[RMDB]
RNA sequence: GGGAACGACUCGAGUAGAGUCGAAAAGGACGACUUGGAACAGGAACUGUAUGAAGAAGGAGUUAAACAAGUUAGAGAAUAUAGAGACAUAAGUUGGAAGAUCAAACAAAUUGAAGAUGAGGACGAGAGAGAUGUCUUAUUCUACAGGUACAUUAAAACGACUUUGAUCAUUCGUGAUCAAAGUCGUAAAAGAAACAACAACAACAAC
Reactivity to 2A3 in 0.01 (KOAc 150mM, MgCl2 10mM, bicine 150mM(pH8.5), 24C), signal-to-noise 3, nucleotides 027 to 156: g030g010a020c030g020a020c050u070u060g010g030a070a050c040a100g050g010a010a040c030u090g040u110a070u160g050a040a020g020a020a030g040g030a040g010u040u130a060a050a000c040a040a040g040u100u120a040g010a020g010a120a010u120a040u050a110g040a040g010a030c030a030u140a040a060g060u080u050g020g000a050a040g020a070u090c040a000a040a080c030a010a100a070u090u120g040a040a020g040a080u050g010a010g030g020a020c020g000a000g000a000g020a000g000a100u040g000u000c000u040u060a060u020u050c010u020a010c010a070g000g070u080a010c040a060u150u220a060a130a010
Reactivity to DMS in 0.01 (KOAc 150mM, MgCl2 10mM, bicine 150mM(pH8.5), 24C), signal-to-noise 1, nucleotides 027 to 156: g010g000a110c050g010a170c100u020u000g020g030a080a130c090a060g000g010a040a140c050u030g000u000a050u000g010a070a050g020a110a010g000g030a150g010u000u000a110a050a110c100a070a100g020u000u000a070g020a140g000a060a030u000a160u000a120g020a140g010a030c000a060u020a060a120g000u000u000g000g040a050a110g010a090u000c070a030a010a140c130a060a100a080u020u000g000a010a080g010a050u000g010a060g000g030a180c040g000a090g010a050g000a090g010a060u000g000u000c030u020u000a030u000u000c050u040a080c030a050g020g060u010a020c040a060u000u010a000a140a120